Annotation: The record gives the reactivity of an RNA of 177 nucleotides to 2A3. For 2A3, 1,223 sequencing reads were counted. 2A3 adducts were read by reverse transcription with SuperScript II with manganese.
RNA sequence: GGGAACGACUCGAGUAGAGUCGAAAAAUAAACCUUCCUUCCUUCCAAUAACUCUCUCUCUCUCAAUAAGGAAGGAAGGAGGAAGGAAUAAAGAGAGAGAGAGAGAGAAAAGCGCAAACGCAAAAAACCUUUUUAUGUGUUUCGACACAUAAAAAGGAAAAGAAACAACAACAACAAC
Reactivity to 2A3 in 0.01 (KOAc 150mM, MgCl2 10mM, bicine 150mM(pH8.5), 24C), signal-to-noise 1, nucleotides 027 to 126: a000u060a000a070a010c020c010u030u000c000c010u000u000c000c000u030u000c010c000a100a030u080a270a300c000u040c000u020c000u020c000u000c000u000c000u010c030a150a190u120a130a000g020g000a020a000g000g010a000a020g000g000a000g010g000a020a000g040g040a050a070u210a170a200a030g110a040g010a000g000a000g010a000g020a010g000a000g020a000g020a040a050a040a010g040c080g000c170a120a050a060c020g070c000a000a040a130a010a010a060